[RMDB]
RNA sequence: GGGAACGACUCGAGUAGAGUCGAAAAGAGCUGAAGUACAGCAAGAACGACGCCAUCCUUGGCAAAGCGUCGAAGAUAAGCGUGCCGAUUGCCAAGGAUUAACGGCACGCGAGGCGAAGACGCCAGAAUAUAUCGUGGUGUUCGCACCACGAUAUAUAAAAGAAACAACAACAACAAC
Reactivity to DMS in 0.01 (KOAc 150mM, MgCl2 10mM, bicine 150mM(pH8.5), 24C), signal-to-noise 6, nucleotides 027 to 126: g000a190g010c010u000g000a150a130g020u060a140c030a020g000c030a110a120g010a110a170c070g000a040c070g000c010c130a070u010c020c020u000u000g010g000c020a070a070a160g020c040g000u010c030g010a140a140g000a100u000a070a100g000c020g000u000g010c000c010g000a150u020u020g000c000c010a020a090g000g000a070u020u010a040a070c030g010g000c010a000c000g020c000g020a050g000g010c010g000a190a160g010a110c030g010c000c040a130g010a130
Reactivity to 2A3 in 0.01 (KOAc 150mM, MgCl2 10mM, bicine 150mM(pH8.5), 24C), signal-to-noise 7, nucleotides 027 to 126: g130a020g000c020u030g040a180a040g130u190a140c010a000g020c020a020a040g090a090a020c030g020a000c010g010c000c020a010u010c000c000u010u010g000g000c000a060a110a000g020c020g020u050c040g040a070a010g060a120u170a140a060g010c000g000u000g000c000c000g050a100u010u040g000c000c010a000a000g010g010a000u010u060a020a010c000g000g000c000a000c000g000c000g010a040g000g020c030g020a130a060g090a090c050g010c000c000a050g100a150